[RMDB]
RNA sequence: GGGAACGACUCGAGUAGAGUCGAAAAGAUAGCCCCUCGUCCGGGAACGAGCCUCUUCCUCCUCCGGGACUCCCCCUCGUGUGGGGAAGAAGAGGGGAGCCGGGCCCGCGUAGACGAUGUGGUCGGGCGACAGCCCGAACUUCGGUUCGGGCUGUCGAAAAGAAACAACAACAACAAC
Reactivity to DMS in 0.01 (KOAc 150mM, MgCl2 10mM, bicine 150mM(pH8.5), 24C), signal-to-noise 1, nucleotides 027 to 126: g000a180u010a220g000c020c000c010c060u000c010g010u010c010c000g010g010g020a010a100c040g000a080g000c030c010u000c010u010u000c010c030u000c000c040u000c010c060g000g010g020a140c110u010c120c010c010c060c040u000c120g010u010g020u000g030g010g010g020a010a030g000a060a030g000a030g000g010g010g010a190g020c090c000g000g010g010c010c010c000g000c270g030u010a140g010a040c050g020a040u020g000u020g040g020u000c100g000g020g000
Structure probing data (DMS) for a 177-nucleotide construct. The RNA was probed in 150 mM KOAc, 10 mM MgCl2 and 150 mM bicine (pH 8.5) at 24 C.